[RMDB]
RNA sequence: GGGAACGACUCGAGUAGAGUCGAAAAGCAGUUCCAGAGUGUGAGGACUCUGAACUCGAGGGUAGUUGACCUCCUCACAGGUCAAAGUGAUUUUGAUAGGCAAGUAUCAGGAUCACACUACCGACAUACUUGCCUAUGUCAACUCGAGGAACUGAGACACUACGAUCAUCUUCGGAUGAUCGUAGUGAAAAGAAACAACAACAACAAC
Reactivity to 2A3 in 0.01 (KOAc 150mM, MgCl2 10mM, bicine 150mM(pH8.5), 24C), signal-to-noise 4, nucleotides 027 to 156: g080c010a000g000u010u000c010c010a000g000a010g030u040g000u010g050a020g010g030a020c000u000c010u040g070a100a060c020u010c020g010a030g020g020g070u150a090g100u050u030g010a010c010c020u040c010c010u030c010a050c020a020g010g010u010c000a050a090a060g090u120g120a140u030u060u080u110g050a020u020a000g080g020c060a060a020g040u010a010u010c060a050g000g040a030u110c050a040c030a040c150u110a110c010c000g020a020c020a030u010a000c000u050u080g000c020c000u000a010u000g020u020c020a040a040c000u000c010g000a010g000g020a000a010c010u010g040a000g010a060
Reactivity to DMS in 0.01 (KOAc 150mM, MgCl2 10mM, bicine 150mM(pH8.5), 24C), signal-to-noise 3, nucleotides 027 to 156: g010c010a010g010u000u000c020c010a080g020a040g040u000g030u000g010a100g020g020a110c040u000c020u010g010a020a070c030u000c010g020a040g000g020g040u010a080g010u000u010g000a060c000c010u010c020c120u010c100a060c060a100g000g000u000c010a020a080a170g030u000g000a090u000u000u010u020g020a050u000a020g010g010c030a050a120g000u000a020u000c030a220g000g010a120u020c060a100c110a210c080u000a060c010c020g020a070c250a040u000a010c010u000u000g010c020c030u000a020u000g010u000c040a060a130c010u000c020g000a030g030g010a040a050c010u000g010a190g010a210